[RMDB]
Notes
Chemical mapping of a 177-nucleotide RNA with DMS and 2A3. It was measured as part of the RMDB libraries RFM100 and RFMREP. The reactions ran in a buffer of 150 mM KOAc, 10 mM MgCl2 and 150 mM bicine (pH 8.5), at 24 C. Reactivities are rounded to 0.1 and cut off at 0 and 3. 2A3 adducts were read by reverse transcription with SuperScript II with manganese.
RNA sequence: GGGAACGACUCGAGUAGAGUCGAAAAUGGCAUGUGUUUCUCAAGCCUGCAACCGACGACUGAACAGACGUGUGAACAGUUUGAGUGUGGUAGCGCUGUGUGAGUUGGCGGUGGAACCCCCUCGUGGAACUUUCCAACUGUUCGCAGUUGGAAAGUUAAAAGAAACAACAACAACAAC
Reactivity to DMS in 0.01 (KOAc 150mM, MgCl2 10mM, bicine 150mM(pH8.5), 24C), signal-to-noise 3, nucleotides 027 to 126: u010g020g020c020a140u020g000u010g000u000u010u000c020u000c060a070a120g020c010c000u000g000c130a090a060c030c010g000a050c050g010a030c010u000g000a120a070c030a030g000a120c030g020u000g020u020g020a090a040c030a050g000u010u030u040g030a180g020u010g020u000g010g010u020a220g000c040g010c010u010g000u000g000u030g030a040g000u000u000g010g010c010g000g000u000g010g000a060a120c040c020c000c050c040u020c110g040u010g000g000
Reactivity to 2A3 in 0.01 (KOAc 150mM, MgCl2 10mM, bicine 150mM(pH8.5), 24C), signal-to-noise 5, nucleotides 027 to 126: u070g000g010c030a020u060g040u010g030u040u060u010c020u010c040a030a030g010c010c000u020g040c050a050a000c000c020g040a040c000g010a000c020u040g050a080a000c000a020g210a140c030g120u090g060u110g070a090a020c010a090g080u110u230u250g240a240g060u130g010u010g020g090u080a020g020c010g000c020u030g000u000g000u020g080a030g010u000u020g050g000c030g000g020u020g010g060a030a050c000c000c000c010c040u090c040g070u140g070g020